Structure probing data (DMS and 2A3) for a 177-nucleotide construct.
The DMS profile rests on 1,526 reads.
Source: RMDB library OK1LIB, as collected in RNAgym.
The 2A3 profile rests on 1,283 reads.
Reactivities are given for positions 27 through 126.
2A3 adducts were read by reverse transcription with SuperScript II with manganese.
RNA sequence: GGGAACGACUCGAGUAGAGUCGAAAAUUUGUGGAUGCGCCCUGAUUUUCCGCCCGGCAAUCCUGCUUUAUCCUGGAAUCAAGCGCCACAAAGAUGCAGAACUGCGGUUUUAUUGCCUGGAUGCAGGCCUUCUGGUGGACUUCGGUCCACCAGAAGGAAAAGAAACAACAACAACAAC
Reactivity to DMS in 0.01 (KOAc 150mM, MgCl2 10mM, bicine 150mM(pH8.5), 24C), signal-to-noise 1, nucleotides 027 to 126: u000u000u000g010u000g030g030a040u000g050c020g060c080c020c040u020g000a030u030u000u030u030c070c080g000c000c020c030g020g050c140a090a100u030c100c060u000g040c020u000u020u040a070u000c050c040u030g000g000a150a070u020c140a080a090g040c040g000c070c000a020c070a000a050a020g030a130u030g030c030a000g000a090a130c170u000g010c170g000g000u010u000u010u000a110u060u010g000c030c000u020g000g000a040u010g010c050a000g000g000
Reactivity to 2A3 in 0.01 (KOAc 150mM, MgCl2 10mM, bicine 150mM(pH8.5), 24C), signal-to-noise 3, nucleotides 027 to 126: u060u030u070g090u060g020g050a110u150g050c010g050c080c020c000u010g060a050u070u060u080u000c020c010g010c000c000c000g020g040c030a000a070u030c030c020u020g010c020u080u090u080a020u060c020c010u040g040g010a040a040u050c060a090a020g040c010g020c020c010a000c000a020a060a010g090a020u200g060c040a020g030a200a030c090u070g030c050g040g000u000u070u080u010a090u090u090g060c000c000u060g000g020a060u090g080c010a000g000g000